[RMDB]
RNA sequence: GGGAACGACUCGAGUAGAGUCGAAAAGAUAUGGAGCGUGAACUACAGCCGCCCGAGCAAUCGGAAACGAUUGAACUACUCGUAACAAGCUGCACGCUCCUAAGUCAAACUUAGGUUCGCCUAAGAAGUGCGUAGAGUAGUUCGCUACUCUACGCACAAAAGAAACAACAACAACAAC
Reactivity to DMS in 0.01 (KOAc 150mM, MgCl2 10mM, bicine 150mM(pH8.5), 24C), signal-to-noise 1, nucleotides 027 to 126: g020a060u000a280u000g010g000a020g010c020g010u000g000a020a080c160u010a300c010a010g000c000c100g000c300c120c000g000a020g000c010a010a000u000c000g000g000a040a050a290c010g000a000u010u000g050a140a070c110u000a300c000u000c000g010u000a100a240c190a190a080g000c020u000g010c000a000c000g020c010u000c000c000u000a010a040g000u000c040a140a080a120c020u000u000a000g000g040u000u020c290g000c000c000u010a000a000g000a130a170
Reactivity to 2A3 in 0.01 (KOAc 150mM, MgCl2 10mM, bicine 150mM(pH8.5), 24C), signal-to-noise 2, nucleotides 027 to 126: g010a010u010a010u090g010g000a000g010c020g000u020g050a180a210c170u250a110c300a030g020c010c110g220c100c150c000g050a000g000c010a020a000u000c000g000g000a070a010a000c000g030a000u000u020g010a100a040c060u260a110c020u180c020g000u140a210a100c240a300a090g000c010u000g010c010a000c010g000c000u000c010c010u000a020a000g000u000c000a030a050a170c020u000u010a010g060g000u070u070c300g030c050c000u000a030a010g070a260a080